The data come from the RNA Mapping Database (RMDB), library OK1LIB. Chemical mapping of a 177-nucleotide RNA with DMS and 2A3. DMS adducts were read by reverse transcription with MarathonRT. The DMS profile rests on 3,552 reads. The reactions ran in a buffer of 150 mM KOAc, 10 mM MgCl2 and 150 mM bicine (pH 8.5), at 24 C. The 2A3 profile rests on 10,181 reads.
[RMDB]
RNA sequence: GGGAACGACUCGAGUAGAGUCGAAAACACCGGCCGUACGCGGCCGGUGAAGUAUUGACGAAUACGACCGUAGACGUAUUCAGGUCUCAUAACUACGGAUAAACAUGGCAGGUACGCCUGCCAUGAAGAUGAUCAAAAUCUUCGGAUUUUGAUCAUCAAAAGAAACAACAACAACAAC
Reactivity to DMS in 0.01 (KOAc 150mM, MgCl2 10mM, bicine 150mM(pH8.5), 24C), signal-to-noise 2, nucleotides 027 to 126: c060a010c020c000g030g040c040c020g020u040a050c200g050c080g000g020c010c010g000g030u000g030a000a040g010u030a060u060u020g000a140c160g000a050a000u020a000c000g000a120c000c030g020u010a000g000a300c020g000u000a000u010u010c000a120g000g010u000c000u000c030a070u000a200a090c020u000a020c010g000g000a280u040a080a060a180c000a000u000g000g020c020a000g060g000u060a060c290g000c010c000u000g020c000c000a000u000g000a070a050
Reactivity to 2A3 in 0.01 (KOAc 150mM, MgCl2 10mM, bicine 150mM(pH8.5), 24C), signal-to-noise 8, nucleotides 027 to 126: c000a000c000c000g020g020c000c000g070u080a070c300g010c010g160g000c000c000g030g000u000g000a020a000g020u050a120u150u230g080a040c060g010a010a000u000a010c030g100a150c020c000g000u000a000g070a130c010g000u000a030u010u010c020a020g110g080u010c010u010c060a140u120a270a150c000u010a000c000g020g020a050u180a030a090a010c000a000u000g000g010c000a000g030g000u070a030c270g110c020c000u000g000c000c000a010u000g000a000a000